RNA sequence: GGGAACGACUCGAGUAGAGUCGAAAAGUCUCGGCGGCGUGUUGGUUCUGCGUCGGUGUCGUCGUUUUUGCAUGGUUAUGCGUCGCUGAGCGCACUACGCCCGAUGGGGUUGCGAGCAGGCGGCGACCGCAUACUAUGCUUUCGAGCAUAGUAUGCGAAAAGAAACAACAACAACAAC
Reactivity to DMS in 0.01 (KOAc 150mM, MgCl2 10mM, bicine 150mM(pH8.5), 24C), signal-to-noise 3, nucleotides 027 to 126: g010u030c000u000c020g000g010c020g020g010c010g000u010g000u020u010g010g020u020u020c060u010g010c100g030u030c070g000g020u000g000u000c010g020u000c020g000u000u020u010u030u020g000c030a070u010g000g000u030u010a040u020g000c000g000u010c010g020c000u020g000a050g010c080g000c110a050c170u030a110c150g020c000c000c030g000a110u050g030g000g010g000u000u010g010c060g010a150g040c060a040g000g010c020g000g000c020g000a030c060
Reactivity to 2A3 in 0.01 (KOAc 150mM, MgCl2 10mM, bicine 150mM(pH8.5), 24C), signal-to-noise 6, nucleotides 027 to 126: g070u050c020u010c010g010g020c000g020g000c030g010u100g020u020u160g090g080u090u070c040u090g010c020g030u020c050g010g050u050g020u000c020g010u000c000g010u010u010u020u150u130g070c070a090u120g080g060u180u300a110u250g040c020g000u020c010g010c120u050g020a030g010c010g010c010a030c050u220a060c070g070c000c010c010g100a250u270g030g000g000g050u070u070g030c050g020a060g030c020a030g040g030c010g000g000c000g000a010c010